The record gives the reactivity of an RNA of 177 nucleotides to 2A3 and DMS.
[RMDB]
RNA sequence: GGGAACGACUCGAGUAGAGUCGAAAAGUCAGAAGUGGCUAGCACUUUUGACAGACCGAUAAAUGCAGCCAUGAAUAGCUCAUUCAUUAGUGGUGAGCAGAGGAAGUCAUUCCUCCGAAACCUCGGCUAUUUACCGUACUUUCGAGUACGGUAAAUAAAAAGAAACAACAACAACAAC
Reactivity to 2A3 in 0.01 (KOAc 150mM, MgCl2 10mM, bicine 150mM(pH8.5), 24C), signal-to-noise 5, nucleotides 027 to 126: g010u000c000a000g000a010a000g010u010g030g070c100u060a180g140c000a000c000u020u020u020u020g000a000c020a000g030a020c010c010g000a070u140a220a190a010u160g040c070a000g000c030c000a060u080g060a110a060u090a110g010c020u020c050a040u200u050c030a080u070u250a080g080u060g100g010u020g010a020g000c010a000g000a000g010g010a030a000g040u080c050a260u000u030c010c000u010c010c030g090a070a030a020c010c030u050c050g020g000c010
Reactivity to DMS in 0.01 (KOAc 150mM, MgCl2 10mM, bicine 150mM(pH8.5), 24C), signal-to-noise 8, nucleotides 027 to 126: g010u000c000a010g010a000a010g020u000g020g010c250u010a160g030c000a020c000u000u000u000u000g010a010c000a100g010a210c020c030g010a100u020a050a100a080u010g010c150a110g000c020c020a090u000g000a080a080u000a110g000c060u000c030a060u000u000c040a170u010u020a120g020u000g000g010u010g000a070g010c030a070g010a020g010g000a030a030g000u010c300a090u000u000c000c010u000c010c110g000a070a110a090c140c060u000c080g000g000c070
Description: For 2A3 the reverse transcriptase was SuperScript II with manganese. The reactions ran in a buffer of 150 mM KOAc, 10 mM MgCl2 and 150 mM bicine (pH 8.5), at 24 C. Source: RMDB library OK2TRN, as collected in RNAgym.